[RMDB]
RNA sequence: GGGAACGACUCGAGUAGAGUCGAAAACACAUGGUCUGCUCUUGUGACUAUUAGUCUCGAAAUAUGGCAUAAAACAAGGGGGAACGGAUCUUGCGACAUUGGUGGUUCCUCUAUGAUCCUCCAAUUACACUAUCGCUAUCUUCGGAUAGCGAUAGUGAAAAGAAACAACAACAACAAC
Reactivity to 2A3 in 0.01 (KOAc 150mM, MgCl2 10mM, bicine 150mM(pH8.5), 24C), signal-to-noise 2, nucleotides 027 to 126: c030a000c010a020u040g000g030u000c010u070g030c020u010c000u080u060g000u050g030a040c040u030a070u070u130a060g050u010c030u040c120g100a110a150a000u300a180u220g020g000c010a010u040a050a040a020a010c030a040a030g040g020g020g010g020a050a060c000g010g000a010u000c000u020u130g090c090g030a030c040a110u000u060g000g020u020g000g030u000u030c060c020u010c090u090a150u270g030a010u000c000c020u000c030c020a030a030u050u030a010
Reactivity to DMS in 0.01 (KOAc 150mM, MgCl2 10mM, bicine 150mM(pH8.5), 24C), signal-to-noise 1, nucleotides 027 to 126: c080a100c140a020u000g000g020u010c010u000g020c030u000c030u000u000g010u000g060a150c080u010a030u030u000a040g040u000c020u020c080g020a070a120a070u030a060u020g000g000c040a030u000a090a040a080a050c090a030a070g060g000g000g000g010a090a260c100g000g000a030u000c010u000u000g060c000g000a080c230a060u000u020g000g010u000g000g010u010u030c010c110u000c130u010a080u010g000a160u000c000c010u000c030c040a040a040u000u000a190